The data come from the RNA Mapping Database (RMDB), library OK3TST.
The record gives the reactivity of an RNA of 207 nucleotides to 2A3 and DMS.
DMS (dimethyl sulfate) methylates the pairing face of unpaired adenines and cytosines.
For 2A3 the reverse transcriptase was SuperScript II with manganese.
As a SHAPE reagent, 2A3 marks flexible, mostly unpaired nucleotides at the ribose 2'-OH.
Conditions: 150 mM KOAc, 10 mM MgCl2 and 150 mM bicine (pH 8.5), 24 C.

RNA sequence: GGGAACGACUCGAGUAGAGUCGAAAAGUGUAAUGAAAUGAAUAUUGAACAUGAUGCACAAGACUUCAGUUGAGUUCCAGGUCUACCUUCUCUCCAAAUCUCAGUUUUCUUACCUGUAAAGUAGAUGAUGUUAGUUCCCUCAAAGGGUGCUUUGAAACGCGUCAUCAAUUUUCGAAUUGAUGACGCGAAAAGAAACAACAACAACAAC
Reactivity to 2A3 in 0.01 (KOAc 150mM, MgCl2 10mM, bicine 150mM(pH8.5), 24C), signal-to-noise 3, nucleotides 027 to 156: g050u020g010u060a150a140u080g060a140a110a020u030g030a090a070u190a110u140u110g040a050a010c010a050u140g030a060u100g110c030a000c010a060a040g040a030c050u010u040c080a070g010u060u030g110a020g000u060u030c040c030a020g030g000u020c000u020a040c000c030u070u040c010u000c010u000c010c020a080a080a110u000c050u010c040a070g000u020u010u130u000c030u040u080a050c020c000u030g010u160a030a070a060g010u040a030g010a120u090g000a010u060g040u050u010a020g000u000u000c000c000c000u040c010a020a050a000g040g020g000u050g030c000u100u070u080g050a080a100a000
Reactivity to DMS in 0.01 (KOAc 150mM, MgCl2 10mM, bicine 150mM(pH8.5), 24C), signal-to-noise 3, nucleotides 027 to 156: g030u010g010u010a060a090u000g010a100a140a140u010g030a160a140u010a200u010u010g020a100a150c050a090u000g000a140u010g000c050a130c060a120a140g010a100c020u010u010c030a060g010u000u000g010a130g010u030u000c020c000a120g050g020u000c020u010a050c010c040u000u000c030u010c030u000c040c030a050a060a070u010c040u000c060a080g000u000u000u010u000c010u010u000a090c030c020u010g020u000a080a060a080g000u000a050g020a040u010g010a080u010g030u000u000a100g020u000u000c010c000c000u010c110a040a060a150g000g010g010u000g020c010u010u010u000g010a070a070a130